RNA sequence: GGGAACGACUCGAGUAGAGUCGAAAAAAGUGCACCGGAAGUCGGUGAAGCGGGGCUUCGAGUUCACCCUCAUGGUGGUCGGCGAGUCCGGACUGGGCAAGUCCACGCUGAUCAACAGUCUCUUUCAGAUCGGGUAAAAUUUCGAUUUUACCCGAUCAAAAGAAACAACAACAACAAC
Reactivity to 2A3 in 0.01 (KOAc 150mM, MgCl2 10mM, bicine 150mM(pH8.5), 24C), signal-to-noise 1, nucleotides 027 to 126: a000a000g110u090g020c000a010c080c020g020g060a200a000g190u190c010g020g040u070g040a070a000g120c080g010g050g020g050c000u030u050c020g010a010g000u070u050c040a020c020c000c000u050c030a150u110g020g000u000g000g000u050c010g000g040c010g010a020g000u030c060c090g000g010a000c000u070g000g190g160c300a070a010g050u000c000c010a020c000g000c020u010g030a000u020c020a020a030c000a000g020u000c020u030c000u050u130u020c020a020
Reactivity to DMS in 0.01 (KOAc 150mM, MgCl2 10mM, bicine 150mM(pH8.5), 24C), signal-to-noise 1, nucleotides 027 to 126: a070a100g000u010g000c030a040c030c020g020g030a110a150g010u010c040g030g010u000g000a050a080g020c040g010g000g000g000c050u000u010c020g000a080g000u000u000c050a160c050c020c030u000c150a130u000g000g030u000g000g010u000c010g010g010c010g000a110g000u030c270c130g000g000a010c000u010g010g040g000c150a130a010g010u000c000c000a090c020g000c010u000g000a020u010c020a020a030c040a050g000u000c050u000c020u000u000u010c100a110